[RMDB]
RNA sequence: GGGAACGACUCGAGUAGAGUCGAAAAGAUAUGGAAGAGGGAGCUCGACCAUGCGUUGAAAUCGGAAACGAUGGAGCAUGCAAGAGCGAAGAACUCUUCCUAAGUCAAAGCUGCGUUCGCGCAGCAACACUACGUAUUACUUCGGUAAUACGUAGUGAAAAGAAACAACAACAACAAC
Reactivity to 2A3 in 0.01 (KOAc 150mM, MgCl2 10mM, bicine 150mM(pH8.5), 24C), signal-to-noise 6, nucleotides 027 to 126: g010a020u070a030u130g010g000a000a000g000a010g000g010g020a030g010c000u000c000g010a010c010c010a000u010g000c000g220u300u070g030a030a030a000u010c000g000g020a080a040a030c000g000a010u020g010g030a020g000c000a000u010g000c010a060a010g000a000g000c000g020a060a000g010a010a000c000u000c000u000u000c000c000u000a110a010g020u020c060a090a070a090g000c000u000g010c000g050u060u130c300g000c000g000c130a000g000c000a010a000
Reactivity to DMS in 0.01 (KOAc 150mM, MgCl2 10mM, bicine 150mM(pH8.5), 24C), signal-to-noise 9, nucleotides 027 to 126: g010a040u000a300u010g000g010a010a000g020a020g000g010g010a120g030c000u000c000g000a300c300c010a000u000g010c000g020u010u020g010a070a150a020u000c000g010g000a130a080a170c010g010a010u000g000g000a090g000c000a000u000g000c030a020a190g000a000g010c010g010a050a070g000a110a170c010u000c000u000u000c000c000u010a010a070g000u010c050a060a070a090g010c000u000g000c000g010u000u010c240g010c020g010c010a010g010c000a040a090
An RNA of 177 nucleotides, treated with 2A3 and DMS and read out base by base.
The reactions ran in a buffer of 150 mM KOAc, 10 mM MgCl2 and 150 mM bicine (pH 8.5), at 24 C.
For DMS, 15,928 sequencing reads were counted.
Reactivities are given for positions 27 through 126.